RNA sequence: GGGAACGACUCGAGUAGAGUCGAAAAAAGGCUAAGAAAUUCCUUCAAAUAGCUGGAGAUGAUACCGUAUAUGCAAUUAAUAACGACGUUGCUUACGAAUAUAAGCUUCGUGGUUUUGGAUUGUGUGGUCCUACAAAUGGUUCGCCAUUUGUAGGACAAAAGAAACAACAACAACAAC
Reactivity to 2A3 in 0.01 (KOAc 150mM, MgCl2 10mM, bicine 150mM(pH8.5), 24C), signal-to-noise 2, nucleotides 027 to 126: a000a000g090g000c050u080a100a000g070a080a100a050u170u090c060c000u030u050c050a050a090a180u120a050g000c000u050g050g050a080g020a060u160g040a050u080a080c020c030g010u090a140u010a020u300g010c030a010a030u000u030a050a060u090a040a010c070g010a000c000g030u000u000g010c000u000u040a020c030g210a160a010u230a030u010a100a010g000c000u000u020c020g040u050g130g050u040u010u030u080g180g010a000u020u000g000u000g020u050g130
Reactivity to DMS in 0.01 (KOAc 150mM, MgCl2 10mM, bicine 150mM(pH8.5), 24C), signal-to-noise 2, nucleotides 027 to 126: a070a090g000g020c030u000a040a120g000a100a070a170u010u020c080c040u000u010c070a100a140a140u010a050g020c010u000g030g000a090g000a080u000g010a120u020a080c030c030g020u000a100u000a040u010g010c000a010a000u000u000a070a040u000a010a020c010g010a020c010g020u000u000g000c010u000u000a000c080g010a110a010u000a130u010a000a010g010c000u000u000c030g030u000g000g010u000u000u000u000g030g010a000u000u000g000u000g010u010g000
Chemical mapping of a 177-nucleotide RNA with 2A3 and DMS. The data come from the RNA Mapping Database (RMDB), library OK2TRN. The RNA was probed in 150 mM KOAc, 10 mM MgCl2 and 150 mM bicine (pH 8.5) at 24 C.